[RMDB]
RNA sequence: GGGAACGACUCGAGUAGAGUCGAAAAGAAAGAAAGAAAGAUAUAGACAAAAUACAAUCCCGGACAACAAGAAGCUCCUAUAGCUCCUGUAGCUUCUUGUGCUCUAGGAUUGUAUUUUGUUUAUAAACAAGCACAACGUAUUCGUACGUUGUGCUUGAAAAGAAACAACAACAACAAC
Reactivity to 2A3 in 0.01 (KOAc 150mM, MgCl2 10mM, bicine 150mM(pH8.5), 24C), signal-to-noise 3, nucleotides 027 to 126: g070a020a050a000g130a040a090a000g100a080a100a010g040a020u040a000u010a040g010a000c000a000a000a010a010u000a000c000a010a000u020c000c030c000g010g000a020c040a250a000c000a000a120g000a000a010g000c000u010c010c010u180a210u170a230g050c030u110c100c060u040g010u070a000g010c000u000u000c010u000u000g000u000g000c010u020c000u000a010g000g010a000u000u000g000u010a000u000u000u000u000g000u000u000u000a000u000a000a000a000
Reactivity to DMS in 0.01 (KOAc 150mM, MgCl2 10mM, bicine 150mM(pH8.5), 24C), signal-to-noise 2, nucleotides 027 to 126: g030a160a070a100g000a080a110a120g010a050a090a160g010a110u000a010u000a060g020a000c010a020a000a000a000u010a010c020a000a000u000c000c010c040g020g020a220c070a190a020c000a000a000g010a020a000g000c010u010c040c040u010a090u010a170g010c090u050c030c130u010g020u030a020g010c000u000u000c000u000u000g010u020g030c300u010c000u000a070g000g000a000u000u000g000u000a000u000u000u000u000g000u000u040u000a000u000a000a110a130

Structure probing data (2A3 and DMS) for a 177-nucleotide construct. For 2A3 the reverse transcriptase was SuperScript II with manganese. High DMS reactivity at an A or C suggests that its Watson-Crick edge is free. The data come from the RNA Mapping Database (RMDB), library RFM100. Conditions: 150 mM KOAc, 10 mM MgCl2 and 150 mM bicine (pH 8.5), 24 C.